[RMDB]
Notes:
The record gives the reactivity of an RNA of 207 nucleotides to 2A3. Source: RMDB library M2RFPK, as collected in RNAgym. The 2A3 profile rests on 1,012 reads. The reactions ran in a buffer of 150 mM KOAc, 10 mM MgCl2 and 150 mM bicine (pH 8.5), at 24 C.

RNA sequence: GGGAACGACUCGAGUAGAGUCGAAAAAGCUCAUGGUACGCCAUGAGCAACCGGAAGCCCUGGCAGGGUGCGCACCGGAUAAAGCGGCCCUACCUCACCGGCACACCGUGCCUUACGAGGCACGCAAAAAACGCAGAACGCUUCGGCGUUCUGCGAAGGUAAAUCAGGAGUUCGCUCCUGAUUUACCAAAAGAAACAACAACAACAAC
Reactivity to 2A3 in 0.01 (KOAc 150mM, MgCl2 10mM, bicine 150mM(pH8.5), 24C), signal-to-noise 2, nucleotides 027 to 156: a000g020c000u010c010a010u010g010g010u020a040c180g010c040c000a010u000g010a000g000c000a000a000c000c000g000g050a090a040g040c010c020c000u020g000g050c040a000g000g000g030u160g300c020g030c000a110c110c100g130g000a080u240a080a150a000g030c000g030g010c010c000c000u000a040c010c000u010c010a020c000c000g010g020c040a030c010a030c030c050g000u000g000c000c000u040u030a070c150g040a000g000g000c000a000c000g010c030a070a120a020a000a000a000c020g000c000a000g000a000a000c000g010c000u060u120c170g100g000c000g000u000u030c020u010g000c000g000a000a000